[RMDB]
RNA sequence: GGGAACGACUCGAGUAGAGUCGAAAAAAGGCGGCAGGGAGCUUGUGGAAGGCGAAACAGGAGUAAUCCCGUGUAGAAACAGGGUUUUCACCCUUCCUUUCUUCUGCGGUUUCCUUCCUUUGCGCGCGGAAGAUGUGAAGUUCGCUUCACAUCUUCCAAAAGAAACAACAACAACAAC
Reactivity to 2A3 in 0.01 (KOAc 150mM, MgCl2 10mM, bicine 150mM(pH8.5), 24C), signal-to-noise 1, nucleotides 027 to 126: a000a040g120g000c040g010g000c010a000g000g000g000a020g000c010u070u060g040u070g140g150a060a010g010g020c010g000a010a030a060c070a030g050g010a010g030u010a010a010u020c000c000c060g010u020g010u020a020g010a070a070a120c300a210g030g030g010u030u020u180u280c090a040c000c010c000u050u000c010c000u000u020u020c000u070u020c040u110g000c000g010g000u010u020u020c010c090u000u000c010c000u020u090u020g050c210g010c000g030c040
Reactivity to DMS in 0.01 (KOAc 150mM, MgCl2 10mM, bicine 150mM(pH8.5), 24C), signal-to-noise 1, nucleotides 027 to 126: a070a090g010g010c120g000g010c030a030g040g000g010a040g020c040u000u000g030u000g010g010a120a030g000g000c070g020a080a080a070c150a020g010g010a040g020u000a090a050u010c160c000c030g020u000g000u000a020g000a040a020a010c200a030g000g000g000u000u010u010u020c170a090c030c010c010u000u020c040c010u000u000u000c000u000u000c020u030g020c020g000g000u000u010u000c000c010u000u000c010c010u020u000u010g020c050g000c030g010c080
An RNA of 177 nucleotides, treated with 2A3 and DMS and read out base by base. The reactions ran in a buffer of 150 mM KOAc, 10 mM MgCl2 and 150 mM bicine (pH 8.5), at 24 C.